[RMDB]
RNA sequence: GGGAACGACUCGAGUAGAGUCGAAAAUUGAGUCGAGAGUAAGCGCGGGAUUCAAAAACAUAGUCGUUGCAAGUGCGCACGAGGUACUGGUAUCCUACUAGGAAGUGAGGCGGAGGCUCUCGGUACAUGACUGCGUAUAGUUCGCUAUACGCAGUCAAAAAGAAACAACAACAACAAC
Reactivity to 2A3 in 0.01 (KOAc 150mM, MgCl2 10mM, bicine 150mM(pH8.5), 24C), signal-to-noise 1, nucleotides 027 to 126: u030u060g060a040g040u010c000g000a020g000a000g020u040a180a080g040c090g000c050g000g010g070a040u090u060c070a020a080a000a050a080c000a160u160a020g160u090c020g080u120u050g000c040a030a240g090u030g160c050g000c060a000c010g010a020g080g020u050a020c060u000g000g000u040a060u080c010c000u000a060c040u080a050g140g020a100a120g060u120g080a010g100g040c060g060g000a040g130g000c000u000c000u030c000g000g020u040a060c050a040
Reactivity to DMS in 0.01 (KOAc 150mM, MgCl2 10mM, bicine 150mM(pH8.5), 24C), signal-to-noise 2, nucleotides 027 to 126: u010u030g000a300g020u000c000g010a040g010a050g000u000a070a100g030c090g030c050g000g000g000a060u000u000c040a070a080a090a050a050c110a060u020a090g020u000c070g000u010u030g000c020a100a070g010u030g000c130g000c060a020c090g000a060g000g030u000a080c110u020g000g000u000a060u000c070c000u000a070c110u000a160g010g000a090a160g030u000g000a050g000g000c090g000g010a180g020g000c010u010c010u000c030g010g000u020a050c200a060

The record gives the reactivity of an RNA of 177 nucleotides to 2A3 and DMS. Source: RMDB library OK2TST, as collected in RNAgym. The 2A3 profile rests on 754 reads.